The record gives the reactivity of an RNA of 207 nucleotides to DMS and 2A3. For DMS, 6,614 sequencing reads were counted.
RNA sequence: GGGAACGACUCGAGUAGAGUCGAAAAAAUUGUAUGGAGUCAAUCCUCUAGAAUUCGAUGAAGUUGUCAUGAGAGUUGGUAAACUUGAGACUGAACCGUGGGAUGUGAAAGAAUUAAAUGUUGAUGCAAUGAUGAUUGAAUUGGAUGAUGAUUAUCAUCUGUCUAUCCAAUUCGUUGGAUAGACAGAAAAAGAAACAACAACAACAAC
Reactivity to DMS in 0.01 (KOAc 150mM, MgCl2 10mM, bicine 150mM(pH8.5), 24C), signal-to-noise 3, nucleotides 027 to 156: a070a050u000u000g020u010a150u010g010g010a120g080u000c040a100a180u010c190c020u000c050u000a130g030a080a110u000u000c030g020a090u000g010a060a080g010u000u000g010u000c040a120u000g010a220g020a090g040u000u020g000g000u000a060a050a050c040u000u000g010a230g000a110c050u020g020a070a080c090c020g010u000g010g000g020a060u000g020u010g000a080a050a070g000a050a060u000u010a030a050a090u010g000u000u000g000a060u000g000c010a050a050u000g000a030u000g020a080u000u000g020a050a090u000u000g010g000a060u000g020a070u000g010a100u000u000a120u010c050a160
Reactivity to 2A3 in 0.01 (KOAc 150mM, MgCl2 10mM, bicine 150mM(pH8.5), 24C), signal-to-noise 4, nucleotides 027 to 156: a010a010u230u140g050u100a140u140g060g020a020g030u090c060a060a090u040c010c010u010c020u000a080g060a160a100u190u040c060g000a010u070g010a030a010g020u030u030g070u120c070a080u100g040a040g000a010g110u020u080g000g030u120a100a060a060c030u030u080g020a030g010a060c000u010g030a040a030c030c030g010u050g020g000g000a050u020g010u040g060a050a040a050g050a040a070u090u090a140a120a040u130g020u050u070g030a050u020g020c020a030a050u050g020a010u000g000a020u010u130g040a070a090u080u060g050g010a020u050g000a010u010g010a010u060u130a060u190c030a030
For 2A3 the reverse transcriptase was SuperScript II with manganese. Reactivities are given for positions 27 through 156.